[RMDB]
RNA sequence: GGGAACGACUCGAGUAGAGUCGAAAACGCUGGCUUCGGCCAGCGAAAAUCCUAAGUCUCCCAACAGCGAUCCUUGUCAGGGACCAUCGGAAACGAUGGGUCCCUUGGAUUUAGGAUCGACAUGGGAGAUAUGGAAAAACGGUCUGUUCGCAGACCGGUGUUUAUAACGUUUCGACGUUAUAAACACAAAAGAAACAACAACAACAAC
Reactivity to 2A3 in 0.01 (KOAc 150mM, MgCl2 10mM, bicine 150mM(pH8.5), 24C), signal-to-noise 3, nucleotides 027 to 156: c000g010c000u010g010g000c010u060u100c290g170g000c010c000a000g030c010g000a000a000a000a020u030c010c000u030a100a040g010u000c000u000c000c000c000a070a050c080a090g040c010g010a000u000c000c000u010u010g020u010c010a010g010g000g000a010c000c000a000u000c000g010g040a100a040a060c010g010a010u040g090g010g020u010c000c010c000u010u080g020g010a000u220u040u150a000g000g010a010u000c000g040a040c000a060u030g010g010g010a000g000a000u010a000u010g010g010a060a120a040a020a000c000g000g000u000c010u010g100u090u120c240g000c090a000g010a000c000c010g000
Reactivity to DMS in 0.01 (KOAc 150mM, MgCl2 10mM, bicine 150mM(pH8.5), 24C), signal-to-noise 1, nucleotides 027 to 156: c040g000c020u000g000g020c010u010u010c300g050g030c050c030a010g060c040g000a000a040a130a190u000c010c000u020a060a280g000u000c000u000c020c010c010a060a100c090a170g020c000g000a000u000c010c000u000u000g020u010c010a080g030g010g000a150c000c000a060u000c000g030g020a210a140a270c000g000a010u010g010g070g010u010c000c010c000u010u010g000g030a010u000u010u010a010g010g010a010u000c000g010a020c040a300u000g000g000g010a040g010a000u010a050u000g000g000a070a110a050a090a240c000g020g010u010c000u000g000u010u000c300g010c010a000g000a000c020c000g010
The data come from the RNA Mapping Database (RMDB), library RNAMAK.
This 207-nucleotide RNA was probed chemically with 2A3 and DMS.
2A3 adducts were read by reverse transcription with SuperScript II with manganese.
Reactivities are rounded to 0.1 and cut off at 0 and 3.
The DMS profile rests on 2,131 reads.